[RMDB]
RNA sequence: GGGAACGACUCGAGUAGAGUCGAAAAAAAAAGAUAUGGAUCUAGAACUACCCAUACCAAGCCAACAGCUUAGCUCGGAAACGAGCUAAGACAUGGCUUGUGUAUGGGCUAGAUCCUAAGUCAAAAACAAGGUGAACAAGUUCGCUUGUUCACCUUGAAAAGAAACAACAACAACAAC
Reactivity to DMS in 0.01 (KOAc 150mM, MgCl2 10mM, bicine 150mM(pH8.5), 24C), signal-to-noise 1, nucleotides 027 to 126: a060a030a060a120a040g000a090u010a300u020g010g010a000u000c000u000a010g000a090a050c070u000a300c000c010c000a010u000a010c000c000a000a000g000c000c000a030a100c300a150g000c000u000u000a000g000c000u010c000g020g000a120a040a110c010g000a010g000c010u000a000a000g000a020c050a130u000g010g010c000u000u010g000u010g030u000a020u000g030g000g030c000u010a000g000a020u000c000c000u000a010a060g000u020c000a060a060a050a080a110
The record gives the reactivity of an RNA of 177 nucleotides to DMS.
Reactivities are given for positions 27 through 126.
The reactions ran in a buffer of 150 mM KOAc, 10 mM MgCl2 and 150 mM bicine (pH 8.5), at 24 C.